Chemical mapping of a 207-nucleotide RNA with 2A3.
It was measured as part of the RMDB library OK3TST.
The RNA was probed in 150 mM KOAc, 10 mM MgCl2 and 150 mM bicine (pH 8.5) at 24 C.
2A3 adducts were read by reverse transcription with SuperScript II with manganese.
[RMDB]
RNA sequence: GGGAACGACUCGAGUAGAGUCGAAAAGGAGGGUAGGAUGGGAGAAGAUCAACAUUAUGCUUCCCCUAAAAGUUAUCAGCAAGAAACUUAAACUUUCAUGAACAUACUAAUAGGAUUGGAAAAUUUCUGGGUGUUCAUACUGACAUUUUGUAGGCAGCGUAAGCGGAGCGUUCGCGCUCCGCUUACGAAAAGAAACAACAACAACAAC
Reactivity to 2A3 in 0.01 (KOAc 150mM, MgCl2 10mM, bicine 150mM(pH8.5), 24C), signal-to-noise 1, nucleotides 027 to 156: g100g010a000g010g010g000u120a010g030g010a000u050g010g000g010a160g030a000a060g070a000u150c090a030a180c060a080u140u120a010u230g030c010u060u060c000c020c080c040u010a030a050a050a050g020u030u030a090u120c000a000g090c160a100a120g050a050a000a000c020u070u150a080a070a000c000u010u240u040c020a020u030g010a010a010c050a050u250a180c040u060a040a200u040a250g010g010a010u060u060g000g060a040a110a210a070u040u190u140c170u030g010g000g000u000g020u000u080c000a000u000a160c000u020g080a000c010a050u060u140u090u000g020u130a060g040g070c050a070g040